An RNA of 207 nucleotides, treated with 2A3 and read out base by base. 2A3 adducts were read by reverse transcription with SuperScript II with manganese. For 2A3, 475 sequencing reads were counted.
RNA sequence: GGGAACGACUCGAGUAGAGUCGAAAAGCCUCCUCGCUUCCAUAGAAAGGGGACGGGGCAGAUCGCAUGUGCUACAACCGAGCGGUGGUAUCUGUCAAACUAAGCAGCCACUGCACAUCAAUUGACUAAACGAUGCCGAUCUUCGGAUCGGCAUCAAGGGAACUUAAGUGUUCGCACUUAAGUUCCCAAAAGAAACAACAACAACAAC
Reactivity to 2A3 in 0.01 (KOAc 150mM, MgCl2 10mM, bicine 150mM(pH8.5), 24C), signal-to-noise 1, nucleotides 027 to 156: g040c000c000u090c010c010u040c010g040c060u050u030c020c020a200u060a190g110a130a120a130g030g020g000g000a000c000g000g000g020g090c050a010g020a140u060c020g000c110a010u130g080u040g030c050u050a030c020a150a060c050c030g070a040g030c000g090g010u000g040g040u110a170u100c000u030g030u030c000a130a150a250c200u150a290a000g000c000a000g020c010c000a010c000u030g020c000a010c000a090u110c050a050a300u090u120g070a050c000u080a000a130a130c080g000a000u000g000c020c000g000a000u000c000u030u030c110g070g000a000u000c000g000g040c020a000u000c000a000a000